[RMDB]
RNA sequence: GGGAACGACUCGAGUAGAGUCGAAAAGCCACCUCCGCCAAAAACCUCGCAGGACGGGGAGGAGCCCGACGCGAGGCAAGCGAGGAGAAGUGACGAGGGGGUGCCCGCCUCGUGCGGGAUAACGCCACUCGUGAGGAGGUUUCGACCUCCUCACGAGAAAAGAAACAACAACAACAAC
Reactivity to 2A3 in 0.01 (KOAc 150mM, MgCl2 10mM, bicine 150mM(pH8.5), 24C), signal-to-noise 1, nucleotides 027 to 126: g060c000c000a000c040c000u060c040c050g050c030c010a030a110a020a050a070c010c000u000c000g040c030a120g090g090a280c000g000g010g020g030a070g110g060a110g130c000c030c000g020a000c030g000c010g010a000g000g000c030a030a030g040c060g050a010g080g020a030g080a060a040g120u090g030a020c080g080a040g050g060g010g000g000u010g070c010c010c010g000c010c070u190c140g050u120g010c040g000g000g020a010u100a050a030c020g090c000c000a000
Reactivity to DMS in 0.01 (KOAc 150mM, MgCl2 10mM, bicine 150mM(pH8.5), 24C), signal-to-noise 2, nucleotides 027 to 126: g010c030c000a120c120c020u020c020c030g000c010c070a060a070a140a170a110c000c000u000c000g020c010a120g010g000a150c050g080g010g010g040a160g000g000a240g000c030c010c020g010a140c040g010c010g000a020g010g000c110a040a000g000c150g000a040g010g020a020g030a170a090g020u000g030a030c040g000a080g000g010g020g000g010u010g010c000c000c000g000c000c040u010c260g000u000g020c010g000g000g000a040u030a010a180c110g000c030c000a080